This 207-nucleotide RNA was probed chemically with DMS and 2A3.

RNA sequence: GGGAACGACUCGAGUAGAGUCGAAAAUAAAGAACUGUCUGGCAGAACAAAGUCCAACCCUGCUUGAAAGAGUACAAAACAAUCAAGCAUCAACAAUGUAAAAUUCAUGAUGUUCUGAUCUCUAAUAAAAAAUCAGAUAUGCAAAGAAGCAGGAAGAAUAAAGUCCUUAAUUCGUUAAGGACUUUAUAAAAGAAACAACAACAACAAC
Reactivity to DMS in 0.01 (KOAc 150mM, MgCl2 10mM, bicine 150mM(pH8.5), 24C), signal-to-noise 2, nucleotides 027 to 156: u000a060a140a240g000a080a060c040u010g000u010c040u000g020g050c040a090g000a060a220c050a070a110a140g020u010c050c020a110a070c090c000c020u000g010c010u010u010g030a140a050a180g000a080g030u000a230c090a040a060a130a090c120a060a070u010c050a050a170g010c000a010u000c010a060a170c060a060a070u000g000u000a040a100a140a120u010u000c040a170u020g000a050u000g030u040u000c030u030g000a020u010c010u000c070u020a060a130u110a000a020a060a050a040a080u000c030a050g020a120u000a070u000g000c060a050a110a160g010a020a050g060c000a050g020g000a080a060g020a100
Reactivity to 2A3 in 0.01 (KOAc 150mM, MgCl2 10mM, bicine 150mM(pH8.5), 24C), signal-to-noise 2, nucleotides 027 to 156: u100a000a080a060g060a020a060c020u020g020u020c030u040g060g040c040a030g000a100a020c050a140a090a000g010u010c030c010a000a040c040c000c000u000g000c000u040u010g080a120a110a050g050a000g000u060a060c050a020a080a020a050c040a080a000u030c020a080a000g020c000a010u030c020a000a100c040a050a070u090g080u260a170a070a130a110u130u080c050a040u050g020a030u010g010u060u040c050u070g020a040u040c020u010c020u060a040a180u110a200a200a070a010a010a010u060c040a030g010a090u080a070u190g020c020a040a090a180g010a040a000g070c000a000g000g010a020a050g000a030
Conditions: 150 mM KOAc, 10 mM MgCl2 and 150 mM bicine (pH 8.5), 24 C. The DMS profile rests on 2,609 reads. It was measured as part of the RMDB library OK3TST. For 2A3 the reverse transcriptase was SuperScript II with manganese.